[RMDB]
RNA sequence: GGGAACGACUCGAGUAGAGUCGAAAAAAUUGGAGCGUAAUCGCGUCUUGACGUGAGUGAGCCUAGACUGUAGGCUAUCCCAAGUGGGAUAGCAUAGCUCACAAAACGCUGAUCUACAGUCAUACAAUUACGAAUAUAAGUUCGCUUAUAUUCGUAAAAAAGAAACAACAACAACAAC
Reactivity to DMS in 0.01 (KOAc 150mM, MgCl2 10mM, bicine 150mM(pH8.5), 24C), signal-to-noise 9, nucleotides 027 to 126: a060a090u010u000g010g000a040g020c010g010u000a080a110u000c010g010c000g010u000c070u000u000g020a020c000g020u000g010a080g000u000g000a010g010c010c050u000a070g010a020c010u000g010u000a010g010g010c000u000a000u000c000c000c000a300a150g020u010g020g010g010a010u000a000g010c010a080u000a030g010c000u000c000a030c010a050a050a210a020c010g010c010u000g010a130u010c010u000a000c000a010g010u000c010a180u010a090c190a070a120
Reactivity to 2A3 in 0.01 (KOAc 150mM, MgCl2 10mM, bicine 150mM(pH8.5), 24C), signal-to-noise 9, nucleotides 027 to 126: a000a040u170u110g020g000a010g000c010g010u020a030a020u050c000g000c000g020u020c060u080u200g140a010c010g010u010g010a020g000u010g000a000g000c000c000u010a050g010a010c010u000g010u000a000g030g000c000u000a000u020c010c000c020a170a130g300u300g050g000g000a000u000a000g000c000a000u020a000g000c000u000c010a010c000a000a080a000a000c010g000c000u020g040a070u060c000u000a000c000a000g000u000c000a030u120a070c030a010a140